[RMDB]
Structure probing data (DMS) for a 177-nucleotide construct.
Values cover nucleotides 27 to 126.
Conditions: 150 mM KOAc, 10 mM MgCl2 and 150 mM bicine (pH 8.5), 24 C.

RNA sequence: GGGAACGACUCGAGUAGAGUCGAAAAGAUAUGGACCACAGCAACAGCUACACCCGUCGGAAACGACGGUUGUAGACAUGCUGGAGUCCUAAGUCAAAACGUGCCUUCGGUUCGCCGAAGGCACGAAGAGCCAAUGACUGUUCGCAGUCAUUGGCUCAAAAGAAACAACAACAACAAC
Reactivity to DMS in 0.01 (KOAc 150mM, MgCl2 10mM, bicine 150mM(pH8.5), 24C), signal-to-noise 1, nucleotides 027 to 126: g020a010u020a290u020g010g030a010c000c190a270c020a000g000c000a020a120c300a140g000c000u000a030c000a050c090c000c000g040u000c000g000g000a110a050a110c000g000a010c000g010g030u000u000g030u000a000g000a050c030a120u010g000c000u000g000g000a300g010u000c000c000u010a090a110g000u000c020a060a010a020a230c020g000u000g000c000c010u010u010c020g020g020u000u000c300g000c010c010g000a040a010g020g010c000a010c000g010a020a050